[RMDB]
RNA sequence: GGGAACGACUCGAGUAGAGUCGAAAAACACCCCAUUCGUGGGGUGUGUUAACCGAGGUGUAGCGCAGUCUGGUCAGCGCAUCUGUUUUGGGUACAGAGGGCCAUAGGUUCGAAUCCUGUCACCUUGACCAUUCACGUGCAAGGUUCGCCUUGCAAAGUGUUUAAGAAAUUUCGAUUUCUUAAACACAAAAGAAACAACAACAACAAC
Reactivity to 2A3 in 0.01 (KOAc 150mM, MgCl2 10mM, bicine 150mM(pH8.5), 24C), signal-to-noise 8, nucleotides 027 to 156: a000c010a000c000c020c000c010a010u050u090c200g100u050g000g000g020g000u000g000u010g010u060u110a060a040c040c030g010a010g000g010u030g000u070a050g010c020g000c030a030g020u020c060u090g050g060u240c030a020g010c010g000c030a010u000c000u010g120u050u070u170u200g140g010g020u060a030c020a030g020a040g010g020g000c050c020a050u050a050g020g000u020u030c020g010a010a030u030c000c000u010g020u020c010a030c020c000u030u040g040a050c020c020a070u120u150c140a100c160g080u050g000c000a000a010g000g020u040u050c180g080c020c010u000u000g000c000a010a010a000
Reactivity to DMS in 0.01 (KOAc 150mM, MgCl2 10mM, bicine 150mM(pH8.5), 24C), signal-to-noise 3, nucleotides 027 to 156: a060c010a040c040c000c020c000a080u000u000c180g040u000g000g000g010g060u000g010u000g000u000u000a060a110c060c030g020a080g010g010u000g020u000a070g000c030g000c030a120g020u000c080u000g010g010u000c020a170g010c050g020c030a060u000c020u000g000u000u000u000u000g020g020g040u000a090c050a090g000a100g010g010g010c040c040a120u000a050g010g020u000u020c070g010a300a120u000c020c010u010g020u010c040a030c010c010u020u010g000a050c030c020a120u010u010c080a090c110g010u000g010c020a040a020g010g010u000u000c280g010c010c020u010u000g000c010a020a040a140